[RMDB]
RNA sequence: GGGAACGACUCGAGUAGAGUCGAAAACUCUCACUCUGUGGCUACCUUGACGGCGCCCACAAUUGUGAAUCAAGAGAGGUAUGUUAAAAUUACUGGGUUGUACCCAACCAUUACGGUACCUGAAGAGCUCUUUCAUCUAGUUCGCUAGAUGAAAGAGAAAAGAAACAACAACAACAAC
Reactivity to 2A3 in 0.01 (KOAc 150mM, MgCl2 10mM, bicine 150mM(pH8.5), 24C), signal-to-noise 3, nucleotides 027 to 126: c010u000c000u000c000a030c010u030c040u020g020u010g030g000c030u050a050c030c020u030u130g160a090c110g030g050c000g010c020c040c000a030c000a030a220u070u020g020u030g060a030a140u200c120a180a030g050a000g010a000g080g020u030a020u130g050u020u100a090a130a150a150u140u060a070c050u020g030g010g020u070u090g040u100a070c010c030c000a000a030c010c010a040u100u120a030c070g070g000u000a030c000c030u030g040a040a020g020a040g100
Reactivity to DMS in 0.01 (KOAc 150mM, MgCl2 10mM, bicine 150mM(pH8.5), 24C), signal-to-noise 3, nucleotides 027 to 126: c060u000c040u000c000a060c020u000c060u000g030u000g000g020c040u000a100c010c010u000u010g000a120c200g030g020c200g020c300c010c010a010c040a020a090u000u000g010u000g010a070a060u010c150a090a060g000a120g000a020g010g010u000a010u000g000u000u000a050a040a060a100u000u000a090c060u000g000g000g000u000u000g010u000a290c000c030c020a060a070c060c070a150u020u010a090c090g020g000u010a040c060c010u010g010a100a060g000a100g000